An RNA of 177 nucleotides, treated with 2A3 and DMS and read out base by base. It was measured as part of the RMDB library M2PK50. The reactions ran in a buffer of 150 mM KOAc, 10 mM MgCl2 and 150 mM bicine (pH 8.5), at 24 C.
RNA sequence: GGGAACGACUCGAGUAGAGUCGAAAAGUGGCAUACUUCGGUAUGCCACAAACCAGACCCUAUCUGGAUCACGCUCUACUGCGUGAUCCCAAGUAGAUCCCAAAAGUCGUGGGUUCGCCCACGACAAGUAUAAACGUUGCUUCGGCAACGUUUAUACAAAAGAAACAACAACAACAAC
Reactivity to 2A3 in 0.01 (KOAc 150mM, MgCl2 10mM, bicine 150mM(pH8.5), 24C), signal-to-noise 3, nucleotides 027 to 126: g000u000g000g000c010a010u020a020c010u020u070c180g070g000u000a000u000g000c020c000a000c010a000a000a000c000c000a020g080a020c030c000c020u000a020u070c050u060g000g000a000u000c000a000c000g030c020u090c110u300a230c170u130g010c010g000u000g000a000u000c010c000c000a030a010g020u010a010g010a090u070c030c000c000a040a130a040a030g010u000c010g000u000g000g000g040u020u050c250g070c010c000c010a000c000g000a000c000a000a000
Reactivity to DMS in 0.01 (KOAc 150mM, MgCl2 10mM, bicine 150mM(pH8.5), 24C), signal-to-noise 2, nucleotides 027 to 126: g000u020g000g020c010a020u000a000c000u000u010c130g030g020u000a000u000g000c010c000a000c000a010a050a110c120c080a220g010a130c050c040c010u000a010u000c090u010g000g000a000u000c000a010c000g000c010u010c300u010a150c200u000g020c000g000u000g000a000u000c040c000c100a030a010g010u000a080g010a080u000c010c030c000a090a060a070a110g010u000c000g010u000g000g000g010u000u010c170g030c000c000c010a000c000g010a000c000a020a040